[RMDB]
RNA sequence: GGGAACGACUCGAGUAGAGUCGAAAAAGGCACUCCAUACCCUACUCCGACUCAAUACGUCCCCGUCGGACAGAAUGGUAACAUAUCUCUCCAAAUAUCUGAGCUUGGGUAUACGGGGAAACCCAACAAAAGCAAUUGUGGUUCGCCACAAUUGCAAGAAAACGAAGGAGUUCGCUCCUUCGUUUUCAAAAGAAACAACAACAACAAC
Reactivity to 2A3 in 0.01 (KOAc 150mM, MgCl2 10mM, bicine 150mM(pH8.5), 24C), signal-to-noise 2, nucleotides 027 to 156: a000g070g010c040a020c030u040c010c020a050u070a070c010c000c010u020a020c010u000c030c000g030a010c020u070c200a150a220u180a300c080g120u080c050c040c050c010g040u040c040g000g000a000c010a030g030a080a040u020g050g000u070a060a010c040a100u080a180u040c060u000c010u010c030c010a080a070a040u140a090u060c040u040g060a030g100c100u070u030g040g000g010u030a020u030a090c040g000g000g000g000a010a070a000c000c000c000a050a030c040a040a120a010a010g000c000a000a000u000u000g010u000g010g040u050u070c130g000c030c000a000c000a000a000u000u010g030c000a000a020